This 177-nucleotide RNA was probed chemically with DMS and 2A3. For 2A3, 3,715 sequencing reads were counted. It was measured as part of the RMDB library OK2TRN. For 2A3 the reverse transcriptase was SuperScript II with manganese.
RNA sequence: GGGAACGACUCGAGUAGAGUCGAAAACGCGCUUCAUUACCGAAGCCCACGGCUGCUGGUUGAUUGACGCCGACGGCAACCGCUACGUAGACCUGGUCUGCUCAUGGGGCCCGAUGAUCCUCGGUCAUCCUAGAUGAACUUUCGAGUUCAUCUAGGAAAAAGAAACAACAACAACAAC
Reactivity to DMS in 0.01 (KOAc 150mM, MgCl2 10mM, bicine 150mM(pH8.5), 24C), signal-to-noise 6, nucleotides 027 to 126: c110g020c130g010c030u010u000c040a090u000u020a090c160c060g000a080a070g010c030c060c090a120c130g000g020c030u000g020c050u010g020g000u000u010g000a080u000u000g010a070c120g010c080c020g010a100c060g000g000c020a050a040c020c030g030c080u010a080c160g010u010a050g010a060c050c080u000g010g000u000c020u010g010c040u010c110a070u000g010g000g010g020c050c030c020g010a080u000g000a080u000c030c030u000c080g010g020u000c110a150
Reactivity to 2A3 in 0.01 (KOAc 150mM, MgCl2 10mM, bicine 150mM(pH8.5), 24C), signal-to-noise 3, nucleotides 027 to 126: c040g030c010g000c020u060u030c010a080u060u260a090c050c060g050a040a010g010c000c020c010a050c070g040g000c010u040g000c020u080g040g050u080u050g090a180u050u110g030a050c020g030c040c010g030a070c010g020g000c010a040a060c030c020g030c070u060a020c070g070u060a010g080a120c030c090u050g000g060u010c030u040g070c030u030c090a070u090g030g020g030g010c000c010c010g010a030u050g020a050u040c030c020u020c060g000g050u060c040a060